RNA sequence: GGGAACGACUCGAGUAGAGUCGAAAAUUUCGAUACCAAGAGACAACGGGGUGACGUCGAGAAGCAAAACGUCCUUGACCUCGCCGCGCAGCACGCCAGCCUGCAAAGCAGCACCGACAGCAACAACUCUCAUGCACAGUUUCGACUGUGCAUGAGAAAAAGAAACAACAACAACAAC
Reactivity to DMS in 0.01 (KOAc 150mM, MgCl2 10mM, bicine 150mM(pH8.5), 24C), signal-to-noise 1, nucleotides 027 to 126: u000u000u000c080g050a180u030a110c090c110a090a060g000a110g000a110c050a000a160c080g000g000g000g120u000g000a060c020g000u000c060g000a000g000a140a150g050c200a020a110a210a060c210g000u030c040c100u000u000g010a110c070c000u000c080g030c010c020g000c150g020c020a050g000c010a050c080g010c000c000a000g020c010c040u000g040c090a020a070a110g000c010a070g030c040a030c070c000g000a060c070a000g060c040a070a000c040a050a050c230
Chemical mapping of a 177-nucleotide RNA with DMS.
The reactions ran in a buffer of 150 mM KOAc, 10 mM MgCl2 and 150 mM bicine (pH 8.5), at 24 C.
Values cover nucleotides 27 to 126.
The data come from the RNA Mapping Database (RMDB), library OK2TST.
DMS (dimethyl sulfate) methylates the pairing face of unpaired adenines and cytosines.